This 207-nucleotide RNA was probed chemically with 2A3. 2A3 adducts were read by reverse transcription with SuperScript II with manganese. The RNA was probed in 150 mM KOAc, 10 mM MgCl2 and 150 mM bicine (pH 8.5) at 24 C.
RNA sequence: GGGAACGACUCGAGUAGAGUCGAAAAUAAGCACCUCGUUAGGUGAGGCGGCUACACGAACAUAGGCCACUGACCCCUAACGUCGAGAGACGCCCCGGGUCAGGACAGCUCUUCCCGGCUUAAGGGUAAAAUCACAACGUCUUCGGACGUUGUGAAACAUCUUCCUAGCGUUCGCGCUAGGAAGAUGAAAAGAAACAACAACAACAAC
Reactivity to 2A3 in 0.01 (KOAc 150mM, MgCl2 10mM, bicine 150mM(pH8.5), 24C), signal-to-noise 1, nucleotides 027 to 156: u120a010a000g010c000a000c010c010u040c000g070u120u300a090g000g150u140g080a040g020g020c070g040g000c010u060a040c080a000c070g140a220a000c040a090u150a130g040g070c060c020a050c000u010g000a000c000c000c000c020u000a050a000c000g000u000c000g010a070g020a010g000a050c000g070c000c000c010c000g030g000g000u000c000a000g020g010a000c050a030g000c000u010c010u020u010c000c000c000g000g000c000u100u170a030a060g090g000g020u060a050a060a040a100u050c010a000c000a000a000c000g000u000c000u020u070c220g080g000a000c000g000u000u000g020u000g000a000a000a000
Values cover nucleotides 27 to 156.